RNA sequence: GGGAACGACUCGAGUAGAGUCGAAAAUGAACCGGAGGCAGAGCGCGUCUCCACUGCAAUCGCGUCCGCAAAGGGCGCUUUUACGUCCCCGGUCGCCGUUUUGGAAGCGGUGCUUGGUCUCGCCCGCGGGACUAUGCAUCUUCGGAUGCAUAGUCCCAAAAGAAACAACAACAACAAC
Reactivity to 2A3 in 0.01 (KOAc 150mM, MgCl2 10mM, bicine 150mM(pH8.5), 24C), signal-to-noise 2, nucleotides 027 to 126: u150g020a030a010c020c000g000g010a080g020g020c050a020g020a060g110c060g020c050g120u090c020u070c030c040a080c040u060g000c050a010a070u120c020g010c010g000u010c010c010g080c120a190a100a090g000g000g010c000g010c010u000u020u010u010a020c030g100u080c000c010c010c000g020g000u030c010g000c020c010g020u010u050u070u060g140g060a090a010g010c000g040g030u060g020c010u060u140g050g020u050c030u020c030g070c040c000c010g080c060
Reactivity to DMS in 0.01 (KOAc 150mM, MgCl2 10mM, bicine 150mM(pH8.5), 24C), signal-to-noise 1, nucleotides 027 to 126: u070g110a130a050c080c060g000g000a090g010g050c000a080g010a170g000c110g000c100g010u020c070u000c030c000a050c270u020g020c040a040a030u000c120g040c010g000u000c000c000g010c300a030a130a140g000g010g000c000g010c000u000u020u000u000a070c160g040u010c000c010c000c040g000g010u050c030g120c030c010g000u000u000u050u000g000g070a110a150g010c010g000g000u030g020c030u000u010g040g000u000c010u000c020g010c030c000c020g000c100